[RMDB]
RNA sequence: GGGAACGACUCGAGUAGAGUCGAAAACACUGUUGGAAGAGCAAACGCUGACCUUCUUGAGGUCUGGCUUCAAGCACUGUUUUGGUGUUGUGGCUGAUACUCUUGGGCAGUGUUUUGCACCUCUGAGACUGCUGAUAUUGUUCGCAAUAUCAGCAGUAAAAGAAACAACAACAACAAC
Reactivity to DMS in 0.01 (KOAc 150mM, MgCl2 10mM, bicine 150mM(pH8.5), 24C), signal-to-noise 2, nucleotides 027 to 126: c050a080c090u000g020u000u000g020g010a060a040g010a080g000c090a030a030a030c080g020c060u000g010a060c020c000u010u010c130u010u010g010a010g020g010u000c010u000g020g010c000u000u010c030a080a030g000c000a030c010u000g010u000u000u000u020g020g010u000g020u000u000g010u000g000g000c000u000g010a070u000a100c050u000c000u010u000g000g000g000c000a020g010u000g000u000u000u010u000g010c050a140c090c050u000c050u000g000a170g000
Reactivity to 2A3 in 0.01 (KOAc 150mM, MgCl2 10mM, bicine 150mM(pH8.5), 24C), signal-to-noise 3, nucleotides 027 to 126: c060a010c030u070g050u060u060g100g090a110a030g050a010g050c020a030a000a000c010g010c030u040g090a300c000c010u180u220c020u070u120g030a010g000g000u000c030u060g050g000c000u010u010c050a080a010g080c000a010c020u070g210u300u210u200u300g040g000u010g010u010u010g000u000g000g000c020u010g010a020u150a300c000u000c010u020u010g050g000g000c000a000g000u000g020u000u000u000u000g000c010a030c000c020u000c040u030g030a040g040